RNA sequence: GGGAACGACUCGAGUAGAGUCGAAAAAUAUACACUUAAAGUCCUCAUCUCUAAGAAUGUUGAUAGCAAGGAGAGAGUUGUGUUCAAAUUUGUCAAUAAGCCUGCGGCUCUUAGCGCAAAUAAGCUGCCUUACUCUUACAUUCGUGUAAGAGUAAGGAAAAGAAACAACAACAACAAC
Reactivity to DMS in 0.01 (KOAc 150mM, MgCl2 10mM, bicine 150mM(pH8.5), 24C), signal-to-noise 5, nucleotides 027 to 126: a070u010a100u010a080c080a050c050u000u000a080a110a190g000u010c060c020u020c050a080u010c020u020c020u010a070a140g020a180a110u000g020u010u010g020a110u010a100g010c060a040a140g000g000a070g010a050g000a070g020u000u000g010u000g000u000u000c150a040a120a080u000u000u000g010u010c050a040a080u010a050a070g010c070c040u010g030c070g010g010c020u000c080u010u000a030g010c130g000c060a030a050a050u010a080a070g010c120u000g010
Reactivity to 2A3 in 0.01 (KOAc 150mM, MgCl2 10mM, bicine 150mM(pH8.5), 24C), signal-to-noise 2, nucleotides 027 to 126: a010u200a010u020a030c010a000c020u100u120a140a080a160g030u060c020c010u000c010a260u020c030u020c010u030a080a030g030a160a090u140g040u170u040g160a130u140a060g000c030a030a050g030g010a000g010a010g010a010g040u060u120g000u030g040u040u000c040a100a120a180u060u050u070g020u040c020a000a090u080a190a000g000c020c050u090g040c120g100g030c020u000c030u040u110a060g010c030g000c020a090a020a080u130a090a020g020c030u030g050